RNA sequence: GGGAACGACUCGAGUAGAGUCGAAAAUGGCGAAGCUCGCCGAGGGCAUCGCGGUCGACGGCAUGGAGGCGGUGUUGCCGGUGCUCUGGUCCGACGGGCACGCGUUGCUGACCGAUCAGCUGCCCGAACGGUCAAGUUAAUUCGUUAACUUGACCGUAAAAGAAACAACAACAACAAC
Reactivity to DMS in 0.01 (KOAc 150mM, MgCl2 10mM, bicine 150mM(pH8.5), 24C), signal-to-noise 5, nucleotides 027 to 126: u010g010g010c010g010a100a170g020c190u000c010g030c030c010g010a130g010g010g010c000a020u010c110g030c060g010g010u000c010g010a110c030g000g000c020a050u000g020g010a280g020g010c010g010g010u000g010u010u000g020c010c020g010g010u010g000c010u000c020u010g000g000u010c090c100g010a140c140g010g000g010c010a040c030g010c060g000u000u000g010c000u000g000a150c070c020g000a040u000c020a110g020c080u000g000c000c000c010g010a110
Reactivity to 2A3 in 0.01 (KOAc 150mM, MgCl2 10mM, bicine 150mM(pH8.5), 24C), signal-to-noise 3, nucleotides 027 to 126: u140g010g000c030g070a100a010g200c080u050c050g000c010c010g020a150g010g000g000c040a050u090c060g010c030g020g000u000c010g000a040c000g010g020c030a050u110g120g090a050g030g090c060g040g140u220g110u190u240g030c010c000g000g020u050g000c010u000c050u110g080g050u070c050c030g030a090c040g020g010g000c030a030c060g080c050g050u060u040g000c020u030g030a150c040c010g000a020u020c020a020g000c010u020g000c000c000c000g000a020